An RNA of 207 nucleotides, treated with 2A3 and DMS and read out base by base.
[RMDB]
RNA sequence: GGGAACGACUCGAGUAGAGUCGAAAAGGUGCGGUUUGCCUCGUAAAAAAGCCGCAAUUUAAAGUAAUCGCAAACGACGAUAACUACUCUCUAGCAGCUUAGGCUGGCUAGCGCUCCUUCCAUGUAUUCUUGUGGACUGGAUUUUGGAGUGUCACCCCUCUCAGUUAUUCUUCGGAAUAACUGAGAGAAAAGAAACAACAACAACAAC
Reactivity to 2A3 in 0.01 (KOAc 150mM, MgCl2 10mM, bicine 150mM(pH8.5), 24C), signal-to-noise 4, nucleotides 027 to 156: g090g010u010g010c010g000g040u010u010u070g040c020c040u160c080g070u180a130a140a000a020a010a010g010c000c000g000c030a040a050u100u100u220a100a110a030g030u060a030a030u070c050g010c100a180a160a100c050g100a030c000g020a070u070a160a090c000u030a010c000u010c010u000c010u010a000g010c000a000g000c020u040u080a090g140g000c010u010g170g000c000u000a000g010c000g000c010u000c000c000u010u000c000c010a030u150g040u060a140u100u170c090u140u180g050u110g030g010a040c040u020g000g050a070u130u040u050u200g020g000a010g010u020g010u050c030a100c000c010c000
Reactivity to DMS in 0.01 (KOAc 150mM, MgCl2 10mM, bicine 150mM(pH8.5), 24C), signal-to-noise 2, nucleotides 027 to 156: g020g020u000g010c020g080g010u000u000u020g000c080c050u080c100g030u000a020a050a070a130a070a060g010c000c020g050c020a060a030u000u000u000a090a060a190g000u020a040a050u000c030g020c030a180a120a160c110g000a120c020g000a040u020a080a060c010u000a030c020u010c010u000c050u000a040g030c000a080g000c010u000u010a120g000g010c000u000g000g040c010u000a010g010c040g050c070u000c010c010u000u000c020c010a070u000g000u000a140u010u000c160u000u020g030u000g040g000a090c030u010g000g000a090u000u000u000u000g020g010a060g000u000g010u000c030a060c030c010c070
Reactivities are given for positions 27 through 156. The reactions ran in a buffer of 150 mM KOAc, 10 mM MgCl2 and 150 mM bicine (pH 8.5), at 24 C.